RNA sequence: GGGAACGACUCGAGUAGAGUCGAAAAGAUAUGGAAUCUCUGGAAAGCUUUGAUCUCGGAAACGAGGGAGCUUUACCAGAGGAUUCCUAAGUCAAAACUGGUUGUACCGUUCGCGGUACAACCAGAACCUUUCAAAUGACUUCGGUCAUUUGAAAGGAAAAGAAACAACAACAACAAC
Reactivity to DMS in 0.01 (KOAc 150mM, MgCl2 10mM, bicine 150mM(pH8.5), 24C), signal-to-noise 1, nucleotides 027 to 126: g010a060u010a300u000g000g000a000a020u000c000u000c000u000g000g000a080a070a010g010c000u000u000u000g000a130u000c010u000c000g000g000a170a080a160c010g010a000g020g000g010a030g040c010u010u010u000a120c010c000a040g000a040g010g010a010u000u000c010c000u010a050a120g000u000c020a050a070a080a140c010u010g000g020u000u000g010u000a000c010c000g020u010u020c230g020c010g050g020u000a000c000a000a010c000c000a010g000a040a070
Reactivity to 2A3 in 0.01 (KOAc 150mM, MgCl2 10mM, bicine 150mM(pH8.5), 24C), signal-to-noise 1, nucleotides 027 to 126: g000a000u090a040u100g000g000a000a000u000c020u000c000u050g010g040a020a020a010g010c030u300u290u150g070a140u170c000u000c010g000g070a080a080a100c010g000a000g030g010g010a000g000c010u100u030u030a300c000c010a030g010a030g020g010a000u000u000c000c000u000a040a060g080u050c010a000a010a130a200c000u010g030g000u000u000g000u000a000c040c020g000u050u080c300g020c030g160g000u010a000c000a020a020c000c000a000g000a000a000
About this RNA:
The record gives the reactivity of an RNA of 177 nucleotides to DMS and 2A3. 2A3 is a SHAPE reagent: it acylates the 2'-hydroxyl of flexible nucleotides of all four kinds. The data come from the RNA Mapping Database (RMDB), library TTRDEL. The reactions ran in a buffer of 150 mM KOAc, 10 mM MgCl2 and 150 mM bicine (pH 8.5), at 24 C. The 2A3 profile rests on 1,613 reads.